[RMDB]
RNA sequence: GGGAACGACUCGAGUAGAGUCGAAAAGAUAUGGAUGACUCGCAUCUAUGGGACUCGAUAAGAAUAGGGAGUCGGAAACGACUCCUAUUCUUUUGACGAGUCAGUAGAUGCGAGUCAUCCUAAGUCAGUUUAUCAGGUAGUUCGCUACCUGAUAAACAAAAGAAACAACAACAACAAC
Reactivity to DMS in 0.01 (KOAc 150mM, MgCl2 10mM, bicine 150mM(pH8.5), 24C), signal-to-noise 2, nucleotides 027 to 126: g010a010u000a300u000g010g000a030u010g000a010c010u010c000g000c000a000u020c000u000a010u000g030g010g010a040c000u000c000g020a260u020a010a000g000a000a010u000a040g030g020g000a020g030u000c010g000g000a080a130a170c000g030a010c000u020c000c000u010a010u000u000c000u000u000u000u030g010a200c110g020a020g000u000c000a300g000u020a010g000a010u000g000c000g000a000g010u000c000a000u000c000c000u000a010a070g010u000c040a160